[RMDB]
RNA sequence: GGGAACGACUCGAGUAGAGUCGAAAAACGAGCCUACUACGGUAGGCUCGAGUGUCUUCAAUUCCGUAGUGCAUUGCAGUGUUUGUAGCAGCAGUCUGCAAGCAGUGCGGAAGUGAGGAUUCGUCAAGACUGGGAACUCGUUCGCGAGUUCCCAGUCAAAAGAAACAACAACAACAAC
Reactivity to 2A3 in 0.01 (KOAc 150mM, MgCl2 10mM, bicine 150mM(pH8.5), 24C), signal-to-noise 2, nucleotides 027 to 126: a000c000g000a000g020c000c000u000a000c000u010a000c180g120g010u000a000g000g000c000u010c000g000a000g000u070g000u000c000u000u000c000a050a010u000u000c010c010g000u010a100g250u040g070c190a300u000u000g000c020a020g000u000g120u130u150u080g200u120a120g050c110a010g020c000a040g160u060c000u000g010c010a000a000g000c000a020g090u000g030c010g000g000a000a000g000u000g010a000g000g000a000u050u050c060g090u080c070a050a090
Chemical mapping of a 177-nucleotide RNA with 2A3. Source: RMDB library RFM100, as collected in RNAgym. 2A3 adducts were read by reverse transcription with SuperScript II with manganese. 2A3 is a SHAPE reagent: it acylates the 2'-hydroxyl of flexible nucleotides of all four kinds.